[RMDB]
RNA sequence: GGGAACGACUCGAGUAGAGUCGAAAAGGGUGGACGCUUGCCCUCCCUUCGUGGAGGUUCCUGGUCUCCGCGCGAUUACACGCCGGCGACUCAAGGCACCUACACGAACGGACGGUUCGUGUCUCUCGACUGUUGUUCAGUUCGCUGAACAACAGUCAAAAGAAACAACAACAACAAC
Reactivity to 2A3 in 0.01 (KOAc 150mM, MgCl2 10mM, bicine 150mM(pH8.5), 24C), signal-to-noise 1, nucleotides 027 to 126: g040g020g040u210g040g000a010c000g030c000u030u020g000c010c000c000u000c000c010c000u000u010c000g010u010g020g010a020g000g000u000u010c000c000u000g000g000u000c010u000c010c000g070c030g010c020g040a050u140u220a080c110a030c080g000c020c000g000g000c010g010a010c000u020c240a090a020g000g000c020a000c000c010u000a000c010a000c010g000a010a000c000g000g000a000c000g010g000u020u020c030g020u010g000u000c020u000c000u020c070
Reactivity to DMS in 0.01 (KOAc 150mM, MgCl2 10mM, bicine 150mM(pH8.5), 24C), signal-to-noise 2, nucleotides 027 to 126: g010g030g000u000g000g000a010c000g020c030u010u000g020c010c000c110u010c000c000c060u000u000c020g030u010g000g000a000g020g000u000u000c000c000u000g000g000u000c000u000c000c010g000c260g010c020g000a110u000u010a180c300a230c020g010c010c010g010g000c080g000a010c000u020c080a120a030g020g020c080a000c000c010u020a030c000a010c000g000a020a030c300g000g010a020c300g020g000u000u000c130g020u000g000u000c000u000c030u000c080